[RMDB]
RNA sequence: GGGAACGACUCGAGUAGAGUCGAAAAUGCCGCAGGCCUGCGGUGCGGCAGUGUGGAGACCUGCCGUAAGCCGUGUUGUUUUGACAACCGGGAGAAAGCGUAUGCGGAGGCAGCGCUUUCAGGGUCUAAAAGUAUGGGAUCUUCGGAUCCCAUACAAGUAAUAGAACGUGUUCGCACGUUCUAUUACAAAAGAAACAACAACAACAAC
Reactivity to 2A3 in 0.01 (KOAc 150mM, MgCl2 10mM, bicine 150mM(pH8.5), 24C), signal-to-noise 5, nucleotides 027 to 156: u070g010c010c000g000c010a010g010g000c000c020u040g000c000g010g000u000g000c000g010g010c000a010g010u070g000u080g270g070a070g030a090c010c010u000g000c000c000g000u000a010a010g020c010c020g130u140g020u150u010g020u010u130u090u300g110a010c000a000a000c010c000g000g000g000a020g000a010a000a000g000c010g000u040a300u200g010c030g030g080a060g270g080c000a000g000c000g010c010u000u000u000c000a000g010g000g000u000c000u010a040a070a030a040g000u000a000u000g000g000g000a000u000c010u020u030c190g060g000a000u000c010c000c000a000u000a000c000a000a000
Reactivity to DMS in 0.01 (KOAc 150mM, MgCl2 10mM, bicine 150mM(pH8.5), 24C), signal-to-noise 1, nucleotides 027 to 156: u000g010c000c010g030c010a040g000g020c030c040u000g000c010g020g020u000g020c080g000g000c000a070g010u000g000u000g020g020a150g020a120c180c000u000g030c030c030g030u000a000a060g030c000c030g000u000g020u000u000g000u010u000u020u020g000a050c010a000a020c000c010g000g040g000a140g000a020a020a020g000c000g020u000a060u000g000c000g040g030a220g020g020c010a130g000c000g000c000u000u000u000c010a050g010g010g010u000c010u000a070a100a140a240g000u000a030u000g020g020g020a010u000c000u010u000c300g060g000a010u000c010c010c000a000u000a010c000a010a090
The record gives the reactivity of an RNA of 207 nucleotides to 2A3 and DMS. Values cover nucleotides 27 to 156. Values are in units of 0.01, from 0 to 300, in steps of 10. The reactions ran in a buffer of 150 mM KOAc, 10 mM MgCl2 and 150 mM bicine (pH 8.5), at 24 C. For 2A3 the reverse transcriptase was SuperScript II with manganese. It was measured as part of the RMDB library M2RFPK.